Structure probing data (DMS and 2A3) for a 207-nucleotide construct. For DMS the reverse transcriptase was MarathonRT. The RNA was probed in 150 mM KOAc, 10 mM MgCl2 and 150 mM bicine (pH 8.5) at 24 C. 2A3 adducts were read by reverse transcription with SuperScript II with manganese. The 2A3 profile rests on 11,739 reads. The data come from the RNA Mapping Database (RMDB), library RNAMAK.

[RMDB]
RNA sequence: GGGAACGACUCGAGUAGAGUCGAAAAGUAAGGUCGGUUCGCCGACCUUACGAUAAGAUAUGGAUCCUGACAGCUUUUGACGGGAGUGUCGGAAACGACAUGACCGAUAAGCUGAUGGAUCCUAAGUCAGCGAGGGACAAAAUUCGUUUUGUCCCAAGACUAUUCACAAUUUCGAUUGUGAAUAGUCAAAAGAAACAACAACAACAAC
Reactivity to DMS in 0.01 (KOAc 150mM, MgCl2 10mM, bicine 150mM(pH8.5), 24C), signal-to-noise 4, nucleotides 027 to 156: g010u030a000a020g000g030u000c000g000g040u010u000c300g000c030c010g030a000c010c000u000u000a010c000g010a120u000a050a170g000a130u010a220u000g000g010a010u000c020c010u000g020a300c300a050g000c000u000u000u000u000g000a170c060g000g010g010a300g020u000g020u020c000g000g000a110a140a250c000g010a020c000a000u000g010a300c000c000g020a110u010a010a070g050c010u000g000a180u010g000g000a040u000c020c000u000a000a080g010u000c020a120g050c080g010a130g020g080g020a020c000a030a000a030a090u000u000c300g000u000u000u000u000g020u000c000c000c010a000a070
Reactivity to 2A3 in 0.01 (KOAc 150mM, MgCl2 10mM, bicine 150mM(pH8.5), 24C), signal-to-noise 9, nucleotides 027 to 156: g010u000a000a000g010g000u000c020g030g030u040u160c280g030c080c010g010a000c000c000u000u000a000c000g000a000u010a030a050g010a000u030a010u070g000g000a000u000c010c010u080g140a150c050a020g020c010u150u240u300u300g190a070c020g000g010g000a060g020u000g010u000c000g000g020a040a030a010c010g000a000c000a010u040g000a010c000c000g060a080u100a150a010g000c000u000g000a000u010g000g000a000u000c000c000u000a010a000g010u000c030a010g070c090g210a170g020g000g000a000c010a000a020a010a030u110u150c230g070u060u000u010u010g000u000c000c000c000a000a000